[RMDB]
RNA sequence: GGGAACGACUCGAGUAGAGUCGAAAAGCGAGAGAAAGCUGGCUCUCCCUUAGCCAUCCGAGGUGACGCUCGUCCUCCUUCGGAUGCCCAGGUCGGACCGCGAGGAGGUGGAGAUGCCAUGCCGACCGUACCAGGGCCUUCGGGCCCUGGAAAAGAAACAACAACAACAAC
Reactivity to 2A3 in 0.01 (KOAc 150mM, MgCl2 10mM, bicine 150mM(pH8.5), 24C), signal-to-noise 2, nucleotides 027 to 129: g000c080g020a010g020a000g000a030a200a000g060c060u060g010g040c000u020c010u030c080c010c000u010u060a010g000c030c050a020u050c000c010g010a000g000g020u110g000a070c060g050c170u120c090g170u070c010c020u100c000c000u110u090c010g000g000a010u050g000c000c000c000a030g000g040u030c020g030g010a090c000c010g060c050g020a050g030g000a000g000g000u120g010g030a110g000a040u100g020c000c000a030u220g020c000c000g020a000c000c000g000u020a030
Reactivity to DMS in 0.01 (KOAc 150mM, MgCl2 10mM, bicine 150mM(pH8.5), 24C), signal-to-noise 3, nucleotides 027 to 129: g030c080g030a070g000a100g000a090a120a080g020c070u020g020g050c040u030c060u010c000c000c000u070u100a090g000c000c020a020u000c030c020g030a030g000g000u020g000a040c100g000c130u040c000g020u000c010c120u000c030c010u080u030c010g000g010a000u000g020c100c040c060a110g010g030u010c130g020g010a270c060c070g040c110g070a120g070g000a070g000g080u060g020g010a130g020a080u020g070c110c040a010u040g070c020c010g000a030c000c000g020u090a070
Annotation:
The record gives the reactivity of an RNA of 170 nucleotides to 2A3 and DMS. Source: RMDB library 15KLIB, as collected in RNAgym. 2A3 adducts were read by reverse transcription with SuperScript II with manganese. Values cover nucleotides 27 to 129. Reactivities are rounded to 0.1 and cut off at 0 and 3. DMS (dimethyl sulfate) methylates the pairing face of unpaired adenines and cytosines.